[RMDB]
RNA sequence: GGGAACGACUCGAGUAGAGUCGAAAAUAACCUCUCGCUUCUUGCCAAUUGCCUUACUAACUCAUUGUAUUUUACAUUGUUAAUGUAGACACCUGAGCCUUUUGGGUCUGUACAUAGGCAUAUAGUCGAGUCAGGAACUUGAGCUUUAAUAUAUUCACAUCCAAUGUCAUUUCGAUGACAUUGGAUGAAAAGAAACAACAACAACAAC
Reactivity to 2A3 in 0.01 (KOAc 150mM, MgCl2 10mM, bicine 150mM(pH8.5), 24C), signal-to-noise 3, nucleotides 027 to 156: u070a000a040c020c000u000c000u020c020g030c080u010u010c010u010u060g040c030c000a070a150u090u050g010c000c000u030u150a090c030u040a130a000c020u060c040a040u080u100g050u080a160u040u170u050u060a050c020a020u060u040g140u140u180a100a070u030g010u020a010g010a040c020a070c100c060u050g070a060g080c050c110u050u110u060u050g000g000g040u030c040u070g040u010a020c010a080u100a020g000g000c040a020u090a000u020a080g120u080c040g010a000g010u050c050a000g040g010a040a020c020u030u030g040a040g040c020u090u110u050a210a000u120a090u040a120u070u000c000a040
Reactivity to DMS in 0.01 (KOAc 150mM, MgCl2 10mM, bicine 150mM(pH8.5), 24C), signal-to-noise 1, nucleotides 027 to 156: u030a080a160c040c030u000c030u010c010g030c030u020u000c060u000u000g000c000c010a090a250u000u000g030c010c030u000u000a080c040u010a060a000c030u000c010a110u000u000g010u000a090u000u000u010u000a010c030a010u010u000g020u010u010a070a090u000g000u000a040g000a000c070a050c040c020u000g000a090g050c040c060u000u010u020u010g030g000g030u000c040u000g010u010a070c050a090u000a140g000g040c010a040u010a130u000a080g030u000c060g010a090g040u000c060a050g020g010a060a100c050u010u000g020a090g020c030u000u000u000a070a120u010a090u000a150u020u010c000a210